This 177-nucleotide RNA was probed chemically with DMS and 2A3.
RNA sequence: GGGAACGACUCGAGUAGAGUCGAAAAUGCGAGCAGGCUUUCGGUACGAAUAGGGGCAGGCACCCAUCGUCAACACACCCAGCGAAGGUGUGGAACCGUUACGGAUCUUAGAGAAGAAAGAAUCCAGAAAUUACACCUAAUUCGUUAGGUGUAAUUUAAAAGAAACAACAACAACAAC
Reactivity to DMS in 0.01 (KOAc 150mM, MgCl2 10mM, bicine 150mM(pH8.5), 24C), signal-to-noise 9, nucleotides 027 to 126: u010g010c050g010a070g020c050a040g000g000c060u000u010u010c040g010g010u010a060c060g000a060a070u020a090g010g000g010g010c050a070g010g000c080a100c020c010c020a070u010c040g000u000c080a080a140c030a020c030a020c000c000c040a160g020c210g000a140a100g010g000u000g020u000g000g000a070a080c080c040g010u010u010a090c120g010g000a050u000c020u000u010a090g000a150g000a090a090g010a050a050a060g010a070a080u000c020c020a150g000
Reactivity to 2A3 in 0.01 (KOAc 150mM, MgCl2 10mM, bicine 150mM(pH8.5), 24C), signal-to-noise 9, nucleotides 027 to 126: u130g000c020g010a020g020c030a020g040g020c000u030u070u080c050g020g020u060a040c030g030a060a050u110a190g020g010g010g000c030a040g060g020c040a080c000c010c010a040u040c010g060u040c040a080a010c000a000c000a000c010c010c010a050g090c090g130a140a020g010g000u010g000u010g010g000a020a030c010c020g030u040u080a050c050g010g000a000u000c010u010u060a070g030a020g030a240a040g040a040a080a010g030a020a040u010c010c010a020g120
Notes:
Reactivities are rounded to 0.1 and cut off at 0 and 3.